An RNA of 207 nucleotides, treated with DMS and 2A3 and read out base by base. It was measured as part of the RMDB library M2RFPK. The RNA was probed in 150 mM KOAc, 10 mM MgCl2 and 150 mM bicine (pH 8.5) at 24 C. The DMS profile rests on 2,014 reads. For DMS the reverse transcriptase was MarathonRT. For 2A3, 1,901 sequencing reads were counted. Values cover nucleotides 27 to 156.
RNA sequence: GGGAACGACUCGAGUAGAGUCGAAAAGGUGCUCUGAAUGGAGUGCUCUACUGAGAUUAUAAAAUAGAUGGUAAGCUAUUAUCUCUUACAACAGGGCAGGGCUUGUUGGAAUAGGCGGUAAAGUCUAAAAACUACCUCACCUUCGGGUGAGGUAGAACUAUACUUGAACCUUCGGGUUCAAGUAUAGAAAAGAAACAACAACAACAAC
Reactivity to DMS in 0.01 (KOAc 150mM, MgCl2 10mM, bicine 150mM(pH8.5), 24C), signal-to-noise 1, nucleotides 027 to 156: g000g020u000g010c000u000c000u000g020a110a120u000g010g000a020g040u000g020c040u000c060u020a110c000u000g000a110g010a250u010u000a100u000a090a040a080a130u000a040g010a150u000g030g010u000a090a080g000c040u000a070u010u000a070u000c020u010c050u000u010a080c050a080a100c010a040g020g010g010c080a120g050g000g050c020u000u000g020u000u000g020g020a030a090u000a040g010g020c050g030g040u000a020a090a140g030u000c010u000a000a070a020a150a140c010u000a000c000c010u000c010a030c010c000u000u000c300g070g090g060u000g020a010g010g040u010a010g000a020a050
Reactivity to 2A3 in 0.01 (KOAc 150mM, MgCl2 10mM, bicine 150mM(pH8.5), 24C), signal-to-noise 3, nucleotides 027 to 156: g040g010u020g010c000u010c030u060g180a110a070u260g020g010a030g010u020g010c000u040c030u110a120c060u070g020a010g020a050u130u090a060u240a190a100a090a040u100a050g060a040u060g080g120u100a090a020g010c010u040a020u120u050a060u080c010u000c000u030u060a070c010a150a020c010a080g000g030g000c010a010g010g020g000c030u020u020g020u020u020g020g000a060a040u050a060g010g020c020g030g030u100a110a050a010g030u050c030u070a040a040a040a030a030c000u000a000c010c000u000c000a000c000c000u030u030c190g120g000g000u000g000a010g000g000u000a000g000a000a000